[RMDB]
Structure probing data (2A3) for a 177-nucleotide construct.
The data come from the RNA Mapping Database (RMDB), library OK2TRN.
2A3 adducts were read by reverse transcription with SuperScript II with manganese.
RNA sequence: GGGAACGACUCGAGUAGAGUCGAAAAAAUAAAUGCUAUGUCGCAGUUUGGUACCGGUUUGUGCUCUAUGCAGUCUGCCUCUCUUAUUGAGAUUGGCAAGAUAGGAGCCGCGUGCCAUUCUAUGCGCCGCCAACAUCGUGUUCGCACGAUGUUGGCGAAAAGAAACAACAACAACAAC
Reactivity to 2A3 in 0.01 (KOAc 150mM, MgCl2 10mM, bicine 150mM(pH8.5), 24C), signal-to-noise 1, nucleotides 027 to 126: a000a030u230a040a050a060u180g040c020u070a060u230g070u170c000g000c000a000g000u000u020u000g060g010u010a000c010c020g000g110u000u050u080g130u100g030c020u080c020u060a140u120g070c010a000g000u000c000u010g000c020c010u020c010u000c000u120u180a300u300u300g010a020g020a070u060u170g000g000c020a010a020g000a000u090a060g120g030a000g000c000c000g000c060g000u020g010c040c000a000u020u000c030u100a210u100g000c000g000c010